Structure probing data (DMS and 2A3) for a 177-nucleotide construct. For DMS the reverse transcriptase was MarathonRT. The RNA was probed in 150 mM KOAc, 10 mM MgCl2 and 150 mM bicine (pH 8.5) at 24 C. Source: RMDB library OK1LIB, as collected in RNAgym. For 2A3 the reverse transcriptase was SuperScript II with manganese.
RNA sequence: GGGAACGACUCGAGUAGAGUCGAAAAGGAGCUGCGGCGGGGUCUGGGGCGCAGAGCAGCGGCGGGAGGAGGCGGACACGUGGCAACAGCGGUAGCAGCCCGGGCGGCGGCAGCAACAGCGGCGGCGCAGAUGGCCCUGUUUCGACAGGGCCAUCUGAAAAGAAACAACAACAACAAC
Reactivity to DMS in 0.01 (KOAc 150mM, MgCl2 10mM, bicine 150mM(pH8.5), 24C), signal-to-noise 2, nucleotides 027 to 126: g020g000a130g010c140u000g010c130g020g000c000g010g000g010g020u000c080u000g000g000g000g050c090g050c160a070g020a140g000c080a040g010c170g000g000c060g000g010g000a050g000g020a170g000g040c140g000g000a050c090a090c080g030u000g000g000c040a040a060c150a160g000c020g000g030u030a010g010c070a110g000c020c000c010g020g020g000c030g030g020c020g020g010c010a030g030c080a100a030c100a120g020c010g000g020c040g010g000c050g000
Reactivity to 2A3 in 0.01 (KOAc 150mM, MgCl2 10mM, bicine 150mM(pH8.5), 24C), signal-to-noise 2, nucleotides 027 to 126: g070g010a070g030c100u080g020c060g090g000c060g060g060g010g020u000c010u130g000g000g030g000c050g000c040a030g010a020g040c060a010g020c000g070g020c020g020g020g000a070g010g000a020g000g040c040g020g000a010c030a000c040g100u110g030g030c030a070a020c010a120g030c010g050g000u060a050g040c060a020g040c060c030c010g000g000g000c000g010g000c010g010g000c010a010g000c020a020a030c010a030g020c010g030g000c000g010g030c060g000